The record gives the reactivity of an RNA of 207 nucleotides to 2A3. 2A3 adducts were read by reverse transcription with SuperScript II with manganese. The 2A3 profile rests on 982 reads. It was measured as part of the RMDB library M2RFPK.
RNA sequence: GGGAACGACUCGAGUAGAGUCGAAAAAAACUUUUGUGACUUGCUGAAACGGGACUAAUCUCCUCACCGAGGCUAAGCAAGUAAAAUACGCCUCUCAUAUCCUUACCUGAGGGUGGCAAGGAAAUAACCUGCAACGCUUCCUUCGGGAAGCGUUGAACGCUGAUACUAUCUUCGGAUAGUAUCAGCGAAAAGAAACAACAACAACAAC
Reactivity to 2A3 in 0.01 (KOAc 150mM, MgCl2 10mM, bicine 150mM(pH8.5), 24C), signal-to-noise 1, nucleotides 027 to 156: a000a000a000c130u140u090u030u060g120u040g050a040c000u010u000g000c000u040g020a130a000a060c100g000g000g010a030c020u090a080a040u050c020u050c060c010u030c060a080c030c030g000a020g050g010c030u030a020a020g010c020a010a000g060u190a010a040a000a020u110a040c010g000c000c040u080c000u000c030a040u040a090u160c000c000u010u050a100c010c040u020g030a030g000g060g020u000g000g010c010a010a010g050g020a030a110a080u110a020a070c020c050u030g040c010a010a000c000g000c000u000u000c010c000u020u000c000g090g000g000a000a000g000c000g000u000u000g000a020a000